[RMDB]
RNA sequence: GGGAACGACUCGAGUAGAGUCGAAAAGGCGAGUGGGGCUUCGUUGAAGAUAAAGAAGUGUAUGAGGGGGUCGUCCGCCUGACAAAAGACGGUCAGCGUCUGCGCAACAUGAUUAUGUCGUUCAACGCAUGUGCAAGCGAUUCGUCGCUUGCACAUGAAAAGAAACAACAACAACAAC
Reactivity to DMS in 0.01 (KOAc 150mM, MgCl2 10mM, bicine 150mM(pH8.5), 24C), signal-to-noise 2, nucleotides 027 to 126: g030g010c040g000a040g020u000g010g000g020g000c080u000u000c020g010u000u020g000a100a060g010a080u000a040a100a130g010a070a100g000u000g010u000a050u010g010a120g000g020g000g000g030u000c010g030u000c020c010g000c050c020u000g020a080c180a080a090a110a040g020a040c080g000g000u010c070a100g000c060g010u010c040u000g000c060g000c070a060a060c100a030u000g010a060u010u020a050u010g010u000c030g000u000u000c030a050a100c200g010
Reactivity to 2A3 in 0.01 (KOAc 150mM, MgCl2 10mM, bicine 150mM(pH8.5), 24C), signal-to-noise 1, nucleotides 027 to 126: g050g000c060g010a020g000u090g030g020g030g000c000u010u030c000g060u040u070g020a150a040g040a050u080a130a160a060g040a070a000g070u080g070u130a140u140g050a160g000g040g000g000g020u010c000g040u010c000c000g020c010c000u000g000a010c000a020a060a030a060g020a000c020g050g040u080c050a000g040c040g060u000c040u000g000c000g000c000a030a090c000a070u090g020a020u140u150a090u230g040u020c000g070u000u050c030a060a000c080g000

An RNA of 177 nucleotides, treated with DMS and 2A3 and read out base by base. For DMS the reverse transcriptase was MarathonRT. Values cover nucleotides 27 to 126. It was measured as part of the RMDB library OK2TST. The RNA was probed in 150 mM KOAc, 10 mM MgCl2 and 150 mM bicine (pH 8.5) at 24 C. 2A3 adducts were read by reverse transcription with SuperScript II with manganese.